Structure probing data (2A3) for a 207-nucleotide construct. Conditions: 150 mM KOAc, 10 mM MgCl2 and 150 mM bicine (pH 8.5), 24 C. Reactivities are rounded to 0.1 and cut off at 0 and 3. 2A3 adducts were read by reverse transcription with SuperScript II with manganese. The 2A3 profile rests on 1,002 reads.
RNA sequence: GGGAACGACUCGAGUAGAGUCGAAAACAUGUCGAAGGAUUGGGUCCACUCGUCCUGGUGGUCGAACUGGUGGCGGAGGUACAGCAGGGUGUCGACGGUCAGGUUCCACUUGUCGUUCACGACUCGGCUGCGCUCCAGCUCUUCACCGGCACGACGGCAAGGAGGCUCUAUUCGUAGAGCCUCCUUGAAAAGAAACAACAACAACAAC
Reactivity to 2A3 in 0.01 (KOAc 150mM, MgCl2 10mM, bicine 150mM(pH8.5), 24C), signal-to-noise 2, nucleotides 027 to 156: c080a070u180g060u110c050g080a070a140g070g020a080u190u300g070g000g010u040c000c010a100c070u020c020g050u000c000c010u010g010g000u020g000g220u030c100g000a020a010c000u020g000g100u180g040g020c080g020g120a150g010g240u250a160c030a000g000c000a020g010g020g010u060g020u080c100g000a010c010g020g100u170c040a020g050g050u160u200c120c010a000c000u060u110g010u000c000g010u100u150c050a020c080g180a040c070u000c010g010g010c030u090g070c020g000c000u000c000c000a020g000c000u000c000u050u030c000a000c000c000g010g000c030a000c070g030a020c020g020g030